[RMDB]
RNA sequence: GGGAACGACUCGAGUAGAGUCGAAAAGCAUUUGAAAAGCCUGAAGCGAACUCAUCUAAUGGGAUUUCAACGAUUAAUGCAAGACCAUCUCCAGCAUUAAUAUUCUCUCCAGUAAUGGUCAAUGUGAAAUUUAUUAUCCUUUCGAGGAUAAUAAAUUAAAAGAAACAACAACAACAAC
Reactivity to 2A3 in 0.01 (KOAc 150mM, MgCl2 10mM, bicine 150mM(pH8.5), 24C), signal-to-noise 9, nucleotides 027 to 126: g010c020a090u030u050u120g060a060a050a020a020g040c010c010u040g030a050a010g040c030g040a050a050c040u040c090a110u020c080u100a130a060u120g020g000g040a050u030u070u050c030a050a030c040g060a020u020u060a050a010u030g010c020a030a040g030a020c020c010a070u050c040u020c080c030a010g000c000a010u020u030a050a020u040a080u110u020c030u000c000u010c030c020a040g030u100a090a050u060g020g020u030c050a030a080u120g030u060g080a050
Reactivity to DMS in 0.01 (KOAc 150mM, MgCl2 10mM, bicine 150mM(pH8.5), 24C), signal-to-noise 9, nucleotides 027 to 126: g000c070a100u010u020u010g010a050a050a100a130g000c030c020u010g010a090a080g000c080g010a070a080c070u020c050a050u000c080u030a110a100u010g000g000g000a090u000u010u010c050a050a070c250g000a040u020u010a020a030u000g010c020a090a080g000a080c060c040a030u010c060u020c060c050a100g000c030a030u000u010a020a040u010a070u020u020c030u000c020u010c020c030a080g000u030a070a050u010g000g000u010c050a060a070u030g010u010g010a060